Notes
The data come from the RNA Mapping Database (RMDB), library TTRDEL. An RNA of 177 nucleotides, treated with 2A3 and DMS and read out base by base.
RNA sequence: GGGAACGACUCGAGUAGAGUCGAAAAGAUAUGGAUCUAACAAGGGAGGUGGUUCGGAAACGAACCCCGAGGAUCUUGUGGAUCCUAAGUCAAAACAUUCUCGGAGACUUCGGUCUCCGAGAAUGAAGAUAGGAAGGAUCUUCGGAUCCUUCCUAUCAAAAGAAACAACAACAACAAC
Reactivity to 2A3 in 0.01 (KOAc 150mM, MgCl2 10mM, bicine 150mM(pH8.5), 24C), signal-to-noise 2, nucleotides 027 to 126: g030a000u060a020u160g010g000a010u000c020u140a300a080c010a000a000g020g000g010a040g030g000u080g000g030u000u010c020g030g010a170a040a030c000g000a000a010c020c000c020c000g030a070g000g000a010u010c000u010u000g000u020g010g000a000u000c010c000u020a090a030g050u030c020a020a020a090a120c000a010u010u000c000u000c000g000g040a010g020a000c010u200u260c300g160g000u000c010u000c000c000g000a000g010a000a000u000g000a000a010
Reactivity to DMS in 0.01 (KOAc 150mM, MgCl2 10mM, bicine 150mM(pH8.5), 24C), signal-to-noise 3, nucleotides 027 to 126: g020a060u010a300u000g000g000a010u000c010u000a050a020c000a010a030g000g010g020a030g020g030u000g050g030u010u000c000g010g010a080a070a200c000g000a010a010c010c000c010c010g020a060g030g010a030u010c000u000u000g010u000g010g010a000u000c000c000u000a020a090g020u000c030a100a070a140a250c000a010u000u000c000u000c000g000g000a010g000a020c000u000u000c270g030g000u000c000u000c000c000g000a000g000a000a000u000g000a030a050

The 2A3 profile rests on 4,775 reads.